RNA sequence: GGGAACGACUCGAGUAGAGUCGAAAAGCGCGGGUGGGUCAUCAAAAAACUUCAGGAGUGGAGCCAAACAACGAUGCUCCACGCGCUGGGUGUUAUACGCCUUUGUCGGGAUCACCUCAGCGCGGUAACGCUCGGCCACAUGGCGAAACGUUACCGCGCGCCCCAUCUACUUCGGUAGAUGGGGCGCAAAAGAAACAACAACAACAAC
Reactivity to 2A3 in 0.01 (KOAc 150mM, MgCl2 10mM, bicine 150mM(pH8.5), 24C), signal-to-noise 2, nucleotides 027 to 156: g010c020g020c040g020g070g110u130g000g030g040u040c030a130u030c040a030a030a030a030a140a140c100u210u080c090a060g070g040a040g100u000g020g010a000g000c040c050a190a080a010c090a060a020c060g040a100u130g000c000u000c000c000a000c020g000c010g000c010u000g000g020g000u010g000u030u200a120u040a070c120g060c000c020u050u050u160g140u110c090g050g000g030a060u130c020a030c020c000u060c060a040g050c020g040c000g010g000u010a000a000c000g000c010u040c080g140g000c000c020a210c020a220u300g000g000c000g000a060a000a010c000g000u000u000a000c000c000g010c010
Structure probing data (2A3) for a 207-nucleotide construct. The reactions ran in a buffer of 150 mM KOAc, 10 mM MgCl2 and 150 mM bicine (pH 8.5), at 24 C. As a SHAPE reagent, 2A3 marks flexible, mostly unpaired nucleotides at the ribose 2'-OH.